[RMDB]
RNA sequence: GGGAACGACUCGAGUAGAGUCGAAAAUGGUAACAGCAGUUGGACAUGGGUUAGUCGGUCCUAAGAGAUAGGGAACCUCCGUUUUAAAGAAGGCUCUUGUUAGUCUGACCUAUCGAAAGGGAAUGUACCCUACACAUGUAUUCGUACAUGUGUAGGGAAAAGAAACAACAACAACAAC
Reactivity to DMS in 0.01 (KOAc 150mM, MgCl2 10mM, bicine 150mM(pH8.5), 24C), signal-to-noise 9, nucleotides 027 to 126: u020g000g010u010a050a060c080a080g010c050a060g010u000u010g010g010a070c090a060u020g000g000g000u000u010a050g010u010c030g010g000u000c000c010u010a070a070g010a240g010a030u000a020g000g000g010a050a060c030c070u020c120c110g010u010u010u000u000a030a070a140g010a050a020g010g000c010u000c040u030u020g020u020u020a030g010u000c010u000g000a100c010c010u000a020u000c020g010a100a100a100g000g000g020a060a070u010g010u010a140
Reactivity to 2A3 in 0.01 (KOAc 150mM, MgCl2 10mM, bicine 150mM(pH8.5), 24C), signal-to-noise 5, nucleotides 027 to 126: u120g010g020u060a070a040c030a030g040c030a050g020u120u100g060g010a030c030a090u070g040g040g000u060u090a080g030u080c050g010g050u030c000c000u020a080a020g030a000g000a030u020a010g010g000g030a020a020c000c030u060c040c080g040u010u010u010u210a080a080a010g080a030a010g010g000c000u000c010u070u150g080u160u080a000g010u000c020u030g040a040c000c000u020a020u030c020g030a110a030a000g050g010g030a060a120u110g050u080a080

Record summary:
An RNA of 177 nucleotides, treated with DMS and 2A3 and read out base by base. Values cover nucleotides 27 to 126. DMS adducts were read by reverse transcription with MarathonRT. The RNA was probed in 150 mM KOAc, 10 mM MgCl2 and 150 mM bicine (pH 8.5) at 24 C.